Annotation
Chemical mapping of a 177-nucleotide RNA with DMS and 2A3. The 2A3 profile rests on 3,523 reads. The reactions ran in a buffer of 150 mM KOAc, 10 mM MgCl2 and 150 mM bicine (pH 8.5), at 24 C.

[RMDB]
RNA sequence: GGGAACGACUCGAGUAGAGUCGAAAAGCGGGUAACUUCGGUUACCCGCAAAGACGCGUGUCGUCGCGUCGCCGUCGCGUCGCGGCGCGUCGCGUCGCGAGAAAAGGACGAAGUUCGCUUCGUCCAACGUCUAUUGUCAGUUCGCUGACAAUAGACGAAAAGAAACAACAACAACAAC
Reactivity to DMS in 0.01 (KOAc 150mM, MgCl2 10mM, bicine 150mM(pH8.5), 24C), signal-to-noise 3, nucleotides 027 to 126: g010c000g020g010g000u000a000a000c010u000u010c190g030g000u000u000a010c010c000c000g030c000a000a020a050g010a010c000g010c010g020u010g000u010c010g020u000c000g000c000g010u000c010g020c000c300g010u010c160g010c000g010u000c020g030c000g030g000c010g000c020g000u020c010g000c010g020u000c000g040c190g010a110g000a080a120a140a100g000g000a010c000g010a010a010g020u000u030c290g000c000u010u010c000g000u000c010c010a010a020
Reactivity to 2A3 in 0.01 (KOAc 150mM, MgCl2 10mM, bicine 150mM(pH8.5), 24C), signal-to-noise 2, nucleotides 027 to 126: g000c000g000g000g000u000a010a030c000u020u060c160g040g000u020u000a000c010c000c000g010c000a010a000a000g000a000c000g000c010g010u070g070u300c020g010u000c000g010c010g010u000c000g020c010c050g300u140c300g010c000g010u000c000g000c000g010g000c000g000c010g030u060c010g000c000g000u020c000g000c020g020a210g070a010a130a020a060g000g000a000c000g000a010a000g000u030u090c190g050c100u000u000c000g010u000c000c000a000a000